[RMDB]
Chemical mapping of a 177-nucleotide RNA with DMS and 2A3. The 2A3 profile rests on 32,158 reads. For DMS the reverse transcriptase was MarathonRT.
RNA sequence: GGGAACGACUCGAGUAGAGUCGAAAAGAUAUGGACAUAUUAGAACCAUCGAUCCGUAACAUCACUCGGAAACGAGUGUGGGGGAGGUUAUUCUAUGUCCUAAGUCAAAGGGUGCUUCGGCACCCAAGUAUCUAAAUUACUUCGGUAAUUUAGAUACAAAAGAAACAACAACAACAAC
Reactivity to DMS in 0.01 (KOAc 150mM, MgCl2 10mM, bicine 150mM(pH8.5), 24C), signal-to-noise 8, nucleotides 027 to 126: g010a040u000a300u010g000g010a010c000a020u000a020u000u000a020g000a030a030c010c010a260u010c150g010a080u010c000c000g010u010a080a180c170a050u010c010a010c010u010c000g010g000a110a090a140c010g010a010g010u000g030u000g020g000g000g000g000a040g020g010u000u000a040u000u000c030u000a010u000g010u000c000c000u000a030a090g010u000c030a090a110a180g000g010g010u000g000c010u000u010c200g020g000c000a010c000c000c010a000a030
Reactivity to 2A3 in 0.01 (KOAc 150mM, MgCl2 10mM, bicine 150mM(pH8.5), 24C), signal-to-noise 9, nucleotides 027 to 126: g030a020u080a040u140g000g000a000c010a010u040a020u050u070a030g040a050a010c010c010a110u300c030g050a070u010c010c010g090u180a090a090c040a200u270c010a010c000u000c000g020g020a080a070a040c000g010a000g000u000g010u050g020g000g010g000g010a020g030g000u030u030a030u040u010c020u010a010u020g010u000c000c000u020a130a020g050u050c050a080a080a060g010g010g000u020g000c010u070u140c300g170g000c000a000c000c000c000a000a010